[RMDB]
RNA sequence: GGGAACGACUCGAGUAGAGUCGAAAAGAAAGAAAGAAAGAACAACCUCAACAGGCUGGCCGGCCCGGAGGCUGGGCUGGGUGAGUAUCUCUUCGAAAGGCUCACUCUCAAGCACGACUAAGAGCAAGAUUUAACCCAUGUUCGCAUGGGUUAAAUCAAAAGAAACAACAACAACAAC
Reactivity to DMS in 0.01 (KOAc 150mM, MgCl2 10mM, bicine 150mM(pH8.5), 24C), signal-to-noise 3, nucleotides 027 to 126: g020a070a080a110g050a070a110a100g000a090a100a100g050a120a100c090a090a060c100c050u030c030a030a070c060a070g000g000c040u010g000g000c040c010g030g000c000c010c040g000g030a120g000g000c040u000g010g020g010c020u000g000g070g000u010g000a060g020u000a080u030c030u000c040u000u010c160g020a100a120a120g000g010c020u040c020a010c040u010c030u000c080a090a130g020c030a070c050g000a130c040u030a040a050g020a060g020c180a060a080
Reactivity to 2A3 in 0.01 (KOAc 150mM, MgCl2 10mM, bicine 150mM(pH8.5), 24C), signal-to-noise 3, nucleotides 027 to 126: g070a040a050a010g100a030a050a010g050a040a150a020g000a050a030c030a030a050c050c000u000c010a030a030c000a030g090g000c020u040g020g000c010c000g040g020c010c010c000g040g010a020g000g040c020u020g000g050g020c010u040g010g030g050u020g000a010g010u030a130u050c050u000c040u150u160c090g060a100a060a010g020g000c010u010c000a030c000u040c010u010c020a020a030g010c020a020c070g110a050c050u070a090a040g020a020g060c030a090a070

The record gives the reactivity of an RNA of 177 nucleotides to DMS and 2A3.
The reactions ran in a buffer of 150 mM KOAc, 10 mM MgCl2 and 150 mM bicine (pH 8.5), at 24 C.
DMS adducts were read by reverse transcription with MarathonRT.
It was measured as part of the RMDB libraries RFM100 and RFMREP.
For 2A3 the reverse transcriptase was SuperScript II with manganese.